[RMDB]
RNA sequence: GGGAACGACUCGAGUAGAGUCGAAAAGUACGAUUUUUCGAAAUCGUACGAAGGUCAGGUGGCAGCACCACGACACUGGUCGCGGCGACCGAGCCGAAGAGAAUAUGUGUAAUUUCGAUUACACAAACAUGGAGAGGAACUUCGGUUCCUCUCCAUGAAAAGAAACAACAACAACAAC
Reactivity to 2A3 in 0.01 (KOAc 150mM, MgCl2 10mM, bicine 150mM(pH8.5), 24C), signal-to-noise 2, nucleotides 027 to 126: g000u000a000c000g010a010u020u000u010u000u170c130g080a000a000a000u010c000g010u010a010c000g000a130a010g000g040u070c070a030g040g000u040g080g000c000a010g040c000a000c010c040a010c040g140a050c060a010c060u040g060g000u040c160g000c010g000g040c000g070a020c010c000g000a020g000c000c010g030a050a000g050a000g000a080a030u160a120u150g020u010g000u000a000a000u010u110u160c170g070a010u000u010a010c010a000c030a010a040a000
Reactivity to DMS in 0.01 (KOAc 150mM, MgCl2 10mM, bicine 150mM(pH8.5), 24C), signal-to-noise 2, nucleotides 027 to 126: g010u000a010c000g000a030u010u000u000u000u000c230g050a040a000a000u000c000g010u000a010c010g010a050a050g020g030u000c040a250g000g020u010g000g030c030a050g000c000a030c010c000a040c120g000a170c230a080c290u000g010g010u000c160g040c030g010g020c010g020a020c000c020g000a300g000c000c000g000a130a080g010a100g000a120a070u010a070u000g020u000g000u000a010a000u000u000u010c160g010a040u000u000a000c000a000c010a030a050a180
An RNA of 177 nucleotides, treated with 2A3 and DMS and read out base by base. For 2A3 the reverse transcriptase was SuperScript II with manganese. For 2A3, 2,071 sequencing reads were counted. DMS adducts were read by reverse transcription with MarathonRT. The RNA was probed in 150 mM KOAc, 10 mM MgCl2 and 150 mM bicine (pH 8.5) at 24 C.